Structure probing data (2A3 and DMS) for a 207-nucleotide construct. For 2A3 the reverse transcriptase was SuperScript II with manganese. The 2A3 profile rests on 11,305 reads. For DMS the reverse transcriptase was MarathonRT.

RNA sequence: GGGAACGACUCGAGUAGAGUCGAAAACAGGAGAUCGGCAUAGCUCCAUUCUACUAUGCAUCUAGUCGUCGUUUUCGACGUCUAGUAUAGCCCGACACUGCUGGGGCGAUGAACAGCAGAUUACCACUACUCGUAGCGUGGGUUAUGGCUACGUACAAUUAUGAGUCAUAUUCGUAUGACUCAUAAUAAAAGAAACAACAACAACAAC
Reactivity to 2A3 in 0.01 (KOAc 150mM, MgCl2 10mM, bicine 150mM(pH8.5), 24C), signal-to-noise 9, nucleotides 027 to 156: c040a010g020g010a020g020a050u180c130g100g000c010a010u010a020g000c000u010c030c010a080u120u070c030u060a080c010u010a010u030g010c010a040u010c000u000a000g010u010c010g000u000c010g030u050u090u160u300c030g010a000c000g010u000c000u000a000g000u030a050u100a060g000c000c000c000g050a060c040a030c130u010g000c000u010g010g020g000g010c080g100a140u200g070a050a030c010a010g000c000a000g010a030u040u190a070c040c030a030c040u130a030c030u040c050g010u020a000g010c010g020u050g020g080g020u060u150a100u110g070g000c000u000a000c010g040u050a030c060a030
Reactivity to DMS in 0.01 (KOAc 150mM, MgCl2 10mM, bicine 150mM(pH8.5), 24C), signal-to-noise 5, nucleotides 027 to 156: c070a110g030g020a100g010a070u010c060g020g010c000a040u000a020g000c010u010c090c290a170u000u000c040u000a030c000u010a010u000g010c010a160u010c010u000a020g000u010c010g000u000c010g010u000u000u010u010c020g020a020c000g010u000c000u000a010g020u000a070u010a140g010c020c000c020g010a100c040a220c030u010g000c020u000g010g020g030g030c030g010a080u000g000a110a100c010a030g000c000a040g010a180u000u000a070c010c010a100c020u000a090c050u000c090g030u000a050g000c040g000u000g020g010g000u000u000a050u000g010g010c000u000a050c040g030u000a080c120a120